[RMDB]
RNA sequence: GGGAACGACUCGAGUAGAGUCGAAAAAAAAAUCACCUAACUUUCAAGUGAAUUUUGAAACAGAGAUUGAGUUUACCAUAGCCUGUUAACUUGGCUAAAAGUACACAUAUGCCAACAGUCUGAAUUGGUUAAUACCCAAGUUCGCUUGGGUAUUAACAAAAGAAACAACAACAACAAC
Reactivity to 2A3 in 0.01 (KOAc 150mM, MgCl2 10mM, bicine 150mM(pH8.5), 24C), signal-to-noise 2, nucleotides 027 to 126: a000a000a030a000a000u050c020a030c030c030u020a070a040c000u090u180u140c060a040a040g000u090g200a170a130u110u120u050u050g050a050a030a010c020a070g070a000g010a120u000u050g030a050g100u020u050u040a040c000c030a020u010a010g000c010c000u070g020u110u050a120a110c080u140u000g010g000c010u010a010a090a000a000g050u040a050c010a000c020a080u140a040u200g050c010c000a000a020c010a090g000u000c020u060g060a130a130u060u070g030
Reactivity to DMS in 0.01 (KOAc 150mM, MgCl2 10mM, bicine 150mM(pH8.5), 24C), signal-to-noise 3, nucleotides 027 to 126: a020a040a060a100a040u020c030a060c050c010u010a140a120c170u000u010u010c050a060a050g030u010g010a090a080u010u010u000u000g000a060a040a060c110a080g000a050g000a050u000u000g010a110g020u000u000u000a050c020c040a170u000a030g000c030c020u000g010u000u000a060a090c270u010u000g000g000c020u010a020a020a030a080g010u000a020c130a030c070a070u010a060u000g000c070c040a050a110c080a040g010u000c060u000g000a060a130u000u010g000